The data come from the RNA Mapping Database (RMDB), library TTRDES. The record gives the reactivity of an RNA of 177 nucleotides to 2A3 and DMS.
RNA sequence: GGGAACGACUCGAGUAGAGUCGAAAAAAAAAGAUAUGGACUAGACAUGGAGAAACAGAGCGAUGAAAUAACUCGGAAACGAGUUAUGGAGCUCUGGAACCUCCAACAGCUAGUCCUAAGUCAAAAACACUAAGUAUGUGUUCGCACAUACUUAGUGAAAAGAAACAACAACAACAAC
Reactivity to 2A3 in 0.01 (KOAc 150mM, MgCl2 10mM, bicine 150mM(pH8.5), 24C), signal-to-noise 1, nucleotides 027 to 126: a040a000a030a010a020g050a010u080a020u120g020g000a010c000u010a010g040a040c060a170u080g000g000a010g030a030a060a000c010a000g000a000g010c020g300a300u020g000a040a050a020u000a000a010c000u000c010g020g030a020a080a040c010g000a000g010u000u000a010u010g000g020a010g020c000u000c000u000g000g000a000a010c010c000u020c000c000a000a010c020a030g000c000u000a010g000u030c000c000u000a040a000g010u010c020a020a130a010a180a000
Reactivity to DMS in 0.01 (KOAc 150mM, MgCl2 10mM, bicine 150mM(pH8.5), 24C), signal-to-noise 3, nucleotides 027 to 126: a060a040a040a110a080g000a050u000a300u010g000g000a030c000u000a010g010a070c090a260u000g020g000a030g000a080a010a210c000a010g000a010g000c010g000a100u010g000a140a100a000u000a000a010c010u000c000g020g000a100a040a140c010g000a020g010u000u000a000u000g000g010a070g010c010u010c000u000g000g000a120a070c120c010u000c000c000a010a070c300a130g000c020u000a010g000u000c000c010u000a000a080g020u020c050a100a060a070a120a130
Source information: For 2A3 the reverse transcriptase was SuperScript II with manganese. For DMS, 2,937 sequencing reads were counted. The reactions ran in a buffer of 150 mM KOAc, 10 mM MgCl2 and 150 mM bicine (pH 8.5), at 24 C.